Structure probing data (2A3) for a 177-nucleotide construct. For 2A3 the reverse transcriptase was SuperScript II with manganese. Conditions: 150 mM KOAc, 10 mM MgCl2 and 150 mM bicine (pH 8.5), 24 C. Source: RMDB library M2PK50, as collected in RNAgym.
RNA sequence: GGGAACGACUCGAGUAGAGUCGAAAAGUCACAGCGUUCGCGCUGUGACAAAUAAAAUCUCAGGAAACGUGCGAACCUGAGAAAAUAAAAACGUACGAAAUAAAAGCAAAUCGUUCGCGAUUUGCAACAGUUGUUUAGACUUCGGUCUAAACAACUGAAAAGAAACAACAACAACAAC
Reactivity to 2A3 in 0.01 (KOAc 150mM, MgCl2 10mM, bicine 150mM(pH8.5), 24C), signal-to-noise 1, nucleotides 027 to 126: g010u010c000a010c000a010g010c040g020u060u140c160g060c000g010c090u000g010u010g000a000c000a000a010a000u010a000a020a000a050u040c010u000c020a000g030g000a010a060a060c020g010u010g040c010g040a110a060c000c020u000g000a010g040a090a050a010a000u110a000a000a000a010a000c010g020u010a000c010g080a170a000a000u190a020a110a020a040g000c010a000a000a020u000c020g010u060u060c260g020c000g060a000u020u000u000g000c000a000a000